[RMDB]
RNA sequence: GGGAACGACUCGAGUAGAGUCGAAAACACUCGCAGCUAUUCUAUCAAGGGCAUCAUCCCGCCAGGGGACUCUGCCUUACAGACAGUCUCGUGAAGCUCUGGAAUGGCUAAUACGUACAGCCCAGGCCGUUCCGGACGCAUUCGUGCGUCCGGAACGAAAAGAAACAACAACAACAAC
Reactivity to 2A3 in 0.01 (KOAc 150mM, MgCl2 10mM, bicine 150mM(pH8.5), 24C), signal-to-noise 2, nucleotides 027 to 126: c010a030c070u110c060g090c010a000g000c000u030a040u050u020c000u050a170u120c100a140a130g010g020g020c000a020u120c000a050u020c040c000c040g100c040c060a070g030g000g000g000a010c000u000c000u010g040c020c040u000u220a030c030a000g000a020c040a030g020u000c020u000c040g140u100g030a130a030g050c000u000c000u120g000g020a000a000u000g050g050c040u010a010a080u160a050c020g020u020a070c020a010g000c000c000c000a000g000g080c050

Structure probing data (2A3) for a 177-nucleotide construct. It was measured as part of the RMDB library OK1LIB. The reactions ran in a buffer of 150 mM KOAc, 10 mM MgCl2 and 150 mM bicine (pH 8.5), at 24 C.